[RMDB]
RNA sequence: GGGAACGACUCGAGUAGAGUCGAAAAAACGGGUGCCGGCGAGUGCUACGUAUCCUUGGCGGAUCUCCACCGCGGCGUGGCGAAGGAGCGCACGCUGAUGCUGGUAAUGGAUUCACGCUCCUCGCAAGAUCCUGCUCCGGUUCGCCGGAGCAGGAUCAAAAGAAACAACAACAACAAC
Reactivity to 2A3 in 0.01 (KOAc 150mM, MgCl2 10mM, bicine 150mM(pH8.5), 24C), signal-to-noise 1, nucleotides 027 to 126: a000a010c070g000g010g000u160g000c000c000g150g010c090g030a070g140u110g010c040u030a010c130g190u140a000u150c000c000u000u000g010g000c090g130g000a140u090c060u230c140c000a260c040c000g000c070g000g010c020g090u100g000g000c000g000a180a000g130g160a010g040c000g040c090a040c000g010c010u110g010a060u290g000c010u110g030g080u030a300a000u260g020g020a140u100u030c010a040c160g000c000u050c000c030u010c000g000c000a000a040
About this RNA:
The record gives the reactivity of an RNA of 177 nucleotides to 2A3. Values cover nucleotides 27 to 126. Conditions: 150 mM KOAc, 10 mM MgCl2 and 150 mM bicine (pH 8.5), 24 C.